An RNA of 177 nucleotides, treated with DMS and 2A3 and read out base by base. For 2A3 the reverse transcriptase was SuperScript II with manganese. It was measured as part of the RMDB library OK2TST. The reactions ran in a buffer of 150 mM KOAc, 10 mM MgCl2 and 150 mM bicine (pH 8.5), at 24 C.

RNA sequence: GGGAACGACUCGAGUAGAGUCGAAAAGUCACGAUGGGUGGCGUCGAUACCCAAGAGCUCUCUUCCAAAACCAUGGAAGCUCAUAAAGUGCCUGGGCUGUACUUUAUUGGCGAGGUGGUUGAUGUCACCUUUUCCUACUAUUCGUAGUAGGAAAAGGAAAAGAAACAACAACAACAAC
Reactivity to DMS in 0.01 (KOAc 150mM, MgCl2 10mM, bicine 150mM(pH8.5), 24C), signal-to-noise 9, nucleotides 027 to 126: g000u010c110a080c130g010a110u010g010g010g020u000g020g010c020g010u010c040g010a200u010a100c030c020c030a120a120g010a090g010c060u010c110u000c060u000u000c020c020a060a080a130a140c080c080a050u000g000g000a070a160g000c110u000c150a020u000a010a020a010g010u000g000c010c040u010g020g020g020c170u010g010u000a020c010u000u000u000a020u000u000g010g010c040g010a240g010g010u000g010g010u010u010g010a060u000g000u010c060a090
Reactivity to 2A3 in 0.01 (KOAc 150mM, MgCl2 10mM, bicine 150mM(pH8.5), 24C), signal-to-noise 4, nucleotides 027 to 126: g060u050c030a010c110g130a250u230g140g040g030u020g030g000c020g020u020c030g020a030u060a120c010c000c000a040a030g060a020g020c010u020c000u020c000u130u020c020c000a030a090a110a100c010c000a020u010g070g010a030a030g000c010u010c010a020u040a000a010a000g010u010g020c020c050u230g100g250g000c050u040g010u000a010c000u040u030u030a030u040u100g040g000c040g030a070g090g000u020g040g000u020u060g030a070u040g050u060c010a040